Record summary
The record gives the reactivity of an RNA of 177 nucleotides to DMS and 2A3. 2A3 adducts were read by reverse transcription with SuperScript II with manganese. The RNA was probed in 150 mM KOAc, 10 mM MgCl2 and 150 mM bicine (pH 8.5) at 24 C. DMS adducts were read by reverse transcription with MarathonRT.
RNA sequence: GGGAACGACUCGAGUAGAGUCGAAAAACGCUAUCCUCUACGGAGGAUAGCGAUAUUUAAUGACUGUAACGAAGUGUUGCGCACACGGGUCAUUGCCUGCUAGCUAUGCUCGUACGCGAGCAUAGCAUGCUACUUCAAUAUUCGUAUUGAAGUAGCAAAAAGAAACAACAACAACAAC
Reactivity to DMS in 0.01 (KOAc 150mM, MgCl2 10mM, bicine 150mM(pH8.5), 24C), signal-to-noise 9, nucleotides 027 to 126: a060c010g010c000u000a000u000c000c000u000c000u000a140c200g030g010a020g000g010a000u000a000g000c000g010a000u010a010u000u000u010a040a050u000g000a030c000u000g010u020a130a130c100g010a110a110g010u010g010u000u010g010c150g010c100a040c050a070c030g000g000g000u010c000a020u000u000g010c020c000u000g010c170u000a110g010c000u000a000u000g000c000u000c000g010u010a110c240g020c020g010a010g000c000a000u000a000g010c000a020
Reactivity to 2A3 in 0.01 (KOAc 150mM, MgCl2 10mM, bicine 150mM(pH8.5), 24C), signal-to-noise 9, nucleotides 027 to 126: a000c000g010c000u000a000u000c010c000u000c010u020a070c270g120g000a000g000g000a000u000a000g000c000g000a000u000a010u000u060u040a050a040u040g020a010c010u050g090u170a160a050c130g110a300a270g030u040g020u090u100g060c130g000c090a000c000a000c020g020g000g000u000c010a010u010u030g060c000c000u050g060c090u090a040g000c000u000a000u000g000c000u000c000g010u030a020c280g010c010g090a000g000c000a000u000a000g000c000a000